[RMDB]
RNA sequence: GGGAACGACUCGAGUAGAGUCGAAAACAAUUAAGGUGAAGCAGGGUCAGGAACGACGAAUCUCUUUAUGAUAAACAGAUCCAUUUUGCAAGUUCGUUAUUACGGGUAGUUCCUACAAAGGAUCGGACUAAUGACGUAUACAAUACUUGAAUUCUCGCACGUAAAAGUAGUUCGCUACUUUUACGUGAAAAGAAACAACAACAACAAC
Reactivity to 2A3 in 0.01 (KOAc 150mM, MgCl2 10mM, bicine 150mM(pH8.5), 24C), signal-to-noise 7, nucleotides 027 to 156: c040a020a060u150u120a110a040g040g020u030g050a040a020g020c030a030g040g000g020u030c030a020g050g050a070a040c050g030a020c050g050a060a050u050c040u000c010u080u120u100a130u150g070a050u100a090a120a020c050a040g020a040u030c040c020a060u040u090u120u100g030c030a040a040g010u020u040c010g010u030u040a060u060u060a030c040g050g000g010u020a040g020u030u030c020c000u030a070c090a040a130a020g040g010a020u050c040g060g210a010c000u050a050a030u070g030a020c020g030u030a010u030a070c070a100a040u030a090c030u060u060g040a050a030u130u000c030u020c030g030
Reactivity to DMS in 0.01 (KOAc 150mM, MgCl2 10mM, bicine 150mM(pH8.5), 24C), signal-to-noise 3, nucleotides 027 to 156: c060a130a160u000u000a050a030g020g040u000g010a080a130g030c020a080g010g000g010u000c020a110g010g000a060a060c050g010a080c050g000a040a040u000c020u000c040u010u000u010a050u030g010a140u000a070a090a110c060a080g020a080u000c030c000a170u000u000u000u010g050c080a050a080g000u000u000c010g010u010u000a080u000u010a090c060g020g020g030u010a070g010u000u000c010c030u000a150c180a060a100a090g010g020a050u000c020g000g000a140c060u000a050a060u000g000a050c080g020u000a060u000a050c050a050a100u010a060c050u000u000g000a100a170u000u000c020u010c060g020